Source: RMDB libraries RFM100 and RFMREP, as collected in RNAgym. An RNA of 177 nucleotides, treated with 2A3 and DMS and read out base by base. 2A3 adducts were read by reverse transcription with SuperScript II with manganese.
RNA sequence: GGGAACGACUCGAGUAGAGUCGAAAACUACUUUGCAUCGUUCUUUUGUGUACAAAUUUUUAAAGGAGCGGUGUUGAUGGCACUACGGUUUUUUGGUGGAGAAUUGAUGAUUGGUCACAAGACAUCUACUGUAAGACUUAUUCGUAAGUCUUACAGUAAAAGAAACAACAACAACAAC
Reactivity to 2A3 in 0.01 (KOAc 150mM, MgCl2 10mM, bicine 150mM(pH8.5), 24C), signal-to-noise 9, nucleotides 027 to 126: c010u080a030c020u060u060u120g010c010a010u010c010g000u010u000c000u030u050u040u040g140u030g040u060a090c090a080a250a150u130u130u110u190u280a060a080a020g030g000a010g000c020g000g030u000g000u020u070g020a050u030g020g020c030a010c060u120a060c090g060g060u030u020u010u010u100u090g040g000u030g010g050a080g030a140a130u100u070g030a030u040g020a050u050u120g050g010u050c030a020c020a100a020g030a030c020a060u000c020u020
Reactivity to DMS in 0.01 (KOAc 150mM, MgCl2 10mM, bicine 150mM(pH8.5), 24C), signal-to-noise 8, nucleotides 027 to 126: c030u000a070c090u010u020u010g010c040a060u000c020g010u010u000c000u000u010u010u010g010u020g010u010a150c260a070a060a100u030u020u020u020u010a020a050a040g000g000a020g030c020g010g000u000g010u010u000g010a060u020g000g010c060a040c040u010a090c120g010g000u000u000u000u010u010u000g010g020u000g000g010a090g000a060a090u010u010g000a040u010g010a120u000u000g010g010u020c090a050c100a060a080g010a070c090a050u000c060u000